Conditions: 150 mM KOAc, 10 mM MgCl2 and 150 mM bicine (pH 8.5), 24 C. Structure probing data (DMS and 2A3) for a 177-nucleotide construct.
[RMDB]
RNA sequence: GGGAACGACUCGAGUAGAGUCGAAAAGCGAUCAAUAAUAAGUCGACGACUCGAAAGAGUCACAUGGAAACAUGCGUACUAAUGCGUCCAAUGUAGGUCGACGAUUAGGACGCAGAAGAUCGCGAAAGCCUCACCCAUAUUUCGAUAUGGGUGAGGCAAAAGAAACAACAACAACAAC
Reactivity to DMS in 0.01 (KOAc 150mM, MgCl2 10mM, bicine 150mM(pH8.5), 24C), signal-to-noise 1, nucleotides 027 to 126: g000c000g000a000u000c040a150a060u020a160a030u060a210a200g020u000c000g000a190c020g000a000c000u000c000g000a220a170a260g000a000g040u020c000a080c040a030u020g000g000a190a020a140c050a030u070g000c010g010u000a130c050u040a010a060u000g030c000g040u000c000c000a230a170u050g030u010a120g010g000u000c110g000a000c010g000a040u000u030a050g000g000a040c000g010c000a130g060a090a040g000a090u000c070g000c010g050a050a070a030
Reactivity to 2A3 in 0.01 (KOAc 150mM, MgCl2 10mM, bicine 150mM(pH8.5), 24C), signal-to-noise 2, nucleotides 027 to 126: g070c000g000a010u080c080a080a020u140a240a020u160a160a070g030u020c040g010a040c000g010a000c030u000c000g000a000a010a000g000a000g010u030c000a010c010a060u080g010g050a060a000a000c020a040u040g000c010g010u030a040c020u010a060a020u040g050c000g000u000c000c040a100a040u240g120u220a130g010g100u170c030g000a070c010g000a010u000u020a010g010g000a000c000g000c000a000g010a000a000g000a000u020c010g000c000g010a050a000a000

DMS adducts were read by reverse transcription with MarathonRT. 2A3 adducts were read by reverse transcription with SuperScript II with manganese. The 2A3 profile rests on 1,741 reads. Reactivities are given for positions 27 through 126. Values are in units of 0.01, from 0 to 300, in steps of 10. The data come from the RNA Mapping Database (RMDB), library OK1LIB.